Structure probing data (2A3) for a 207-nucleotide construct.
RNA sequence: GGGAACGACUCGAGUAGAGUCGAAAAACGUGGCUUUUUAUGGCCCAUUCUCCGCCUCAGCUUGCGUCACCACUCAGUGUUUCAUUCUGGGUUGGGUAACCGCUACGGAUUGCAGGCUGGAGGAGAUGCCGCUGUCAUCUGAAAACACGGAGUCGUCGACGCGUUGCGUUUUCGAACGCAACGCGUCAAAAGAAACAACAACAACAAC
Reactivity to 2A3 in 0.01 (KOAc 150mM, MgCl2 10mM, bicine 150mM(pH8.5), 24C), signal-to-noise 2, nucleotides 027 to 156: a000c050g000u100g090g060c050u020u070u170u080u060a150u190g070g000c000c000c000a040u210u020c000u000c000c020g080c060c030u110c000a000g000c000u010u010g090c000g020u030c020a000c120c000a000c000u000c000a030g000u000g170u130u300u250c150a120u050u120c020u000g000g000g000u060u240g040g000g030u010a050a020c010c060g110c140u140a110c140g010g110a030u080u300g010c010a000g000g040c000u030g000g040a020g040g000a000g000a000u060g010c020c070g040c150u050g040u040c010a020u010c000u070g100a030a000a010a000c060a020c010g040g000a010g090u030c040g040u120c090
Overview
It was measured as part of the RMDB library OK3TST. The reactions ran in a buffer of 150 mM KOAc, 10 mM MgCl2 and 150 mM bicine (pH 8.5), at 24 C. The 2A3 profile rests on 691 reads.